Structure probing data (2A3) for a 177-nucleotide construct. Conditions: 150 mM KOAc, 10 mM MgCl2 and 150 mM bicine (pH 8.5), 24 C. It was measured as part of the RMDB library OK1LIB.
[RMDB]
RNA sequence: GGGAACGACUCGAGUAGAGUCGAAAACGGAAGACAGUGAGUGGACGGAAUAAAUCCCCUUCCCACCUCCCCACUGUCCACUCACUGUCUUCCGAAAAGGAAAUAUAAAUCGGGGGUGGGAAGGGGAAUUAUGCCAUGCUUUCGAGCAUGGCAUAAUAAAAGAAACAACAACAACAAC
Reactivity to 2A3 in 0.01 (KOAc 150mM, MgCl2 10mM, bicine 150mM(pH8.5), 24C), signal-to-noise 1, nucleotides 027 to 126: c010g000g000a000a000g030a010c040a000g000u000g050a030g000u000g000g030a040c040g020g150a000a110u230a050a140a100u110c000c000c000c040u000u020c010c000c000a000c000c000u020c040c070c010c000a050c020u060g000u000c000c000a000c000u000c010a000c000u050g000u000c000u000u020c020c020g000a000a000a000a000g130g020a000a020a000u300a000u020a050a140a030u290c230g000g000g000g000g000u000g000g000g000a000a000g010g000g000g000a000